[RMDB]
RNA sequence: GGGAACGACUCGAGUAGAGUCGAAAAAUAAUAGUGAAAGUCUCUCGACCACAAUCACAGAAAGAGCGCGGCUUCACGUGGCGACGACUGCUUGCCUGUGCUGUAAGGAGAAAAAAGAGGCGCGCUGCUACGCCUCUGUUUUCGAACAGAGGCGUAGAAAAGAAACAACAACAACAAC
Reactivity to 2A3 in 0.01 (KOAc 150mM, MgCl2 10mM, bicine 150mM(pH8.5), 24C), signal-to-noise 1, nucleotides 027 to 126: a000u220a030a060u070a080g090u100g100a130a060a060g030u030c010u020c000u020c050g200a210c000c000a050c030a130a150u100c050a070c000a080g170a080a110a000g080a030g030c010g000c060g150g040c000u040u040c030a050c120g060u010g000g040c040g000a050c010g080a170c100u030g080c020u080u010g000c000c020u090g030u070g070c080u030g040u140a110a070g050g100a020g080a010a170a050a000a000a000g080a020g020g000c020g010c000g000c000u010g000
Reactivity to DMS in 0.01 (KOAc 150mM, MgCl2 10mM, bicine 150mM(pH8.5), 24C), signal-to-noise 2, nucleotides 027 to 126: a080u000a070a130u000a110g030u000g000a070a140a150g020u010c010u000c070u010c050g010a200c030c030a020c060a070a110u010c080a040c110a150g000a090a040a050g000a010g000c040g040c000g020g060c030u000u010c070a030c170g000u020g020g030c030g010a050c130g000a090c050u010g000c040u000u000g010c100c010u000g020u000g000c110u000g010u010a070a060g000g000a130g020a000a050a050a050a130a120g030a020g010g010c000g010c070g030c040u000g000

Annotation: Structure probing data (2A3 and DMS) for a 177-nucleotide construct. The DMS profile rests on 1,396 reads. The RNA was probed in 150 mM KOAc, 10 mM MgCl2 and 150 mM bicine (pH 8.5) at 24 C.